This 177-nucleotide RNA was probed chemically with 2A3 and DMS. Values are in units of 0.01, from 0 to 300, in steps of 10. For DMS the reverse transcriptase was MarathonRT. Reactivities are given for positions 27 through 126.
RNA sequence: GGGAACGACUCGAGUAGAGUCGAAAAUAUUCUCCAAUACUUGACAAGCUCCUCAUGUCAGACGAAGACUGAAGCUCACCUAGUCUGAGCCGGAAAUCUGCGAUUCUCCUAUGACGCCUAGUCAGGGCUUCGCCUAUACAUUCGUGUAUAGGCGAAGAAAAGAAACAACAACAACAAC
Reactivity to 2A3 in 0.01 (KOAc 150mM, MgCl2 10mM, bicine 150mM(pH8.5), 24C), signal-to-noise 8, nucleotides 027 to 126: u150a040u040u030c050u020c010c020a070a060u080a160c030u040u080g040a030c020a080a010g010c010u040c030c000u030c030a030u080g050u050c020a010g020a080c030g040a040a020g030a020c040u090g060a070a010g000c020u020c020a040c010c070u060a050g040u090c050u040g020a010g000c000c020g050g020a020a070a060u030c020u030g030c020g100a130u090u010c020u030c010c010u090a140u120g010a020c030g030c030c030u040a030g020u030c020a020g010g010g000
Reactivity to DMS in 0.01 (KOAc 150mM, MgCl2 10mM, bicine 150mM(pH8.5), 24C), signal-to-noise 4, nucleotides 027 to 126: u020a100u000u000c020u010c010c130a120a120u020a040c080u010u000g000a060c060a120a110g000c050u000c040c020u000c040a040u030g000u000c090a050g000a120c060g000a070a050g000a080c030u010g010a180a060g020c040u010c050a050c050c060u020a080g010u010c120u000g000a070g010c070c040g000g000a040a040a060u010c020u010g000c050g010a130u020u000c020u000c020c010u000a080u030g010a050c120g010c130c030u010a080g000u010c050a050g020g000g000